[RMDB]
RNA sequence: GGGAACGACUCGAGUAGAGUCGAAAAGAAAGGUAUACUUUUGCCUUCCAUCCUGACUCACGGUUUUUAUUUCGUGGUGAGGCUAGAGAGUAUGAAGCACCUGUUACAUAGCUUGCAGUUGUAUCAAGGAUAGAGUUACUGGGCUGGGCACAGUGGCAGUACAAGGUGAGUUCGCUCACCUUGUACUAAAAGAAACAACAACAACAAC
Reactivity to 2A3 in 0.01 (KOAc 150mM, MgCl2 10mM, bicine 150mM(pH8.5), 24C), signal-to-noise 2, nucleotides 027 to 156: g070a040a050a010g070g010u080a150u110a260c080u000u090u200u160g000c000c000u010u000c000c000a060u040c000c000u030g060a080c010u070c180a060c050g040g010u140u050u010u110u120a120u040u140u070c090g000u030g020g000u030g070a010g000g000c060u030a000g000a000g000a060g060u060a030u220g060a080a030g000c020a020c030c000u000g050u220u030a060c070a110u160a130g060c090u020u080g020c010a030g000u080u060g010u120a070u140c050a070a060g080g010a040u050a060g060a010g010u040u050a070c130u110g000g000g000c020u000g000g030g000c030a000c000a060g010u070g050g000c070
Structure probing data (2A3) for a 207-nucleotide construct.
For 2A3, 695 sequencing reads were counted.
It was measured as part of the RMDB library OK3TST.
Values cover nucleotides 27 to 156.